[RMDB]
RNA sequence: GGGAACGACUCGAGUAGAGUCGAAAAGAUAUGGAGUUCGACGAAGGUGUCCACGAAGAACUCGGAAACGAGGGAGUGGGUCACCAGAGAACUCCUAAGUCAAAAGCAUAAGGUUCGCCUUAUGCAAGUAGCGCAAUAACUUCGGUUAUUGCGCUACAAAAGAAACAACAACAACAAC
Reactivity to DMS in 0.01 (KOAc 150mM, MgCl2 10mM, bicine 150mM(pH8.5), 24C), signal-to-noise 1, nucleotides 027 to 126: g020a050u000a300u000g020g010a030g010u000u010c020g010a170c280g000a060a200g010g020u000g050u000c000c000a010c000g000a060a130g000a100a300c000u000c000g000g000a090a130a120c000g000a010g010g000g000a020g000u000g000g010g000u010c020a000c020c000a050g010a120g000a010a000c000u000c000c000u000a020a100g010u010c020a100a180a120a060g000c000a000u000a000a000g020g010u000u000c150g020c010c010u010u020a000u000g000c020a000a010
Reactivity to 2A3 in 0.01 (KOAc 150mM, MgCl2 10mM, bicine 150mM(pH8.5), 24C), signal-to-noise 1, nucleotides 027 to 126: g080a010u130a030u150g000g030a010g040u000u010c040g150a270c080g030a300a030g000g000u010g030u000c020c000a010c040g060a270a080g020a060a040c000u030c010g020g000a110a170a010c010g000a000g060g000g020a020g010u000g020g040g090u300c000a000c010c010a030g000a000g000a040a000c000u000c000c000u010a080a010g080u000c030a000a090a090a090g040c000a000u000a000a000g000g040u040u140c300g190c020c000u030u000a000u000g000c000a000a020

This 177-nucleotide RNA was probed chemically with DMS and 2A3. The 2A3 profile rests on 1,387 reads. For 2A3 the reverse transcriptase was SuperScript II with manganese. The DMS profile rests on 779 reads. Conditions: 150 mM KOAc, 10 mM MgCl2 and 150 mM bicine (pH 8.5), 24 C.